[RMDB]
RNA sequence: GGGAACGACUCGAGUAGAGUCGAAAACUAACCUUCUUAUUUGGGGUAUGGACAAAGAUAGGAGGUAUGAAAUUGGGCUGACCAAAUACGAUGUUAUUUUUCAGAAUAAUAUUCAGUGAGCAUGUACAUAGUGUUAUGCAUGAACUGCGAUUUUGAACAGCGAGUAAAUAUUCGUAUUUACUCGCUGAAAAGAAACAACAACAACAAC
Reactivity to DMS in 0.01 (KOAc 150mM, MgCl2 10mM, bicine 150mM(pH8.5), 24C), signal-to-noise 2, nucleotides 027 to 156: c050u000a130a090c010c010u000u000c030u020u000a240u000u010u000g030g010g040g020u000a160u010g000g010a120c020a050a080a080g020a130u000a050g040g000a070g010g030u000a080u010g010a030a050a140u010u000g000g020g030c050u000g000a140c050c020a060a040a140u010a130c070g010a110u000g000u000u000a040u020u000u000u000u020c110a160g000a050a020u000a030a060u000a090u010u000c050a140g000u010g050a100g010c000a030u000g000u000a020c010a120u000a120g020u010g000u000u000a100u000g000c030a110u000g020a060a040c050u000g010c090g000a220u000u000u000u000g010a100a260
Reactivity to 2A3 in 0.01 (KOAc 150mM, MgCl2 10mM, bicine 150mM(pH8.5), 24C), signal-to-noise 4, nucleotides 027 to 156: c000u030a030a040c010c010u060u050c010u070u110a110u070u040u070g010g010g000g020u100a100u120g080g020a020c020a030a020a040g060a040u170a040g020g050a020g040g020u070a100u100g080a050a090a050u100u080g030g000g000c060u070g050a080c030c030a020a060a030u140a030c060g020a030u040g040u070u020a060u040u070u030u070u140c030a020g010a070a020u040a050a010u050a080u070u050c020a010g020u010g090a030g050c010a000u040g040u070a040c020a070u170a100g050u080g050u260u100a060u080g000c030a010u050g020a050a010c020u050g060c050g130a100u040u040u100u180g040a100a010
About this RNA:
An RNA of 207 nucleotides, treated with DMS and 2A3 and read out base by base. For 2A3 the reverse transcriptase was SuperScript II with manganese. Conditions: 150 mM KOAc, 10 mM MgCl2 and 150 mM bicine (pH 8.5), 24 C. It was measured as part of the RMDB library OK3TST.